An RNA of 177 nucleotides, treated with DMS and 2A3 and read out base by base. The RNA was probed in 150 mM KOAc, 10 mM MgCl2 and 150 mM bicine (pH 8.5) at 24 C. For 2A3 the reverse transcriptase was SuperScript II with manganese. Reactivities are given for positions 27 through 126.

RNA sequence: GGGAACGACUCGAGUAGAGUCGAAAACAAGUGACACUAUGGAUCUGAUCUGGGGCUGGAUACCUCUAUCUUGGUGAUCCAGUUAAAAAACGUCUAGCGGGCCAAGCCCAGGGGGGAUCCCUGGUUUUUGAAAGAUUACCUUCGGGUAAUCUUUCAAAAAAGAAACAACAACAACAAC
Reactivity to DMS in 0.01 (KOAc 150mM, MgCl2 10mM, bicine 150mM(pH8.5), 24C), signal-to-noise 1, nucleotides 027 to 126: c020a090a050g000u060g040a020c260a100c000u000a000u000g010g050a070u020c000u020g000a300u020c000u000g000g000g010g100c000u010g010g000a060u000a000c000c000u000c300u000a150u100c050u040u000g000g000u030g000a000u000c000c000a000g000u000u020a000a000a300a070a000a010c270g000u030c090u030a060g010c090g000g030g000c030c000a120a050g000c010c000c000a000g000g030g000g010g050g000a060u000c010c030c010u010g000g000u020u000u000
Reactivity to 2A3 in 0.01 (KOAc 150mM, MgCl2 10mM, bicine 150mM(pH8.5), 24C), signal-to-noise 1, nucleotides 027 to 126: c050a010a100g090u070g130a040c030a020c020u040a060u120g010g030a010u000c020u020g000a000u030c000u020g000g010g010g000c000u010g000g000a000u000a010c010c020u080c020u030a110u090c170u100u200g000g000u050g100a020u010c000c000a000g010u000u020a010a010a020a010a000a000c020g000u000c050u070a040g160c030g050g010g060c040c020a000a000g040c030c000c010a000g000g000g000g000g010g000a010u050c010c000c010u000g000g000u000u070u030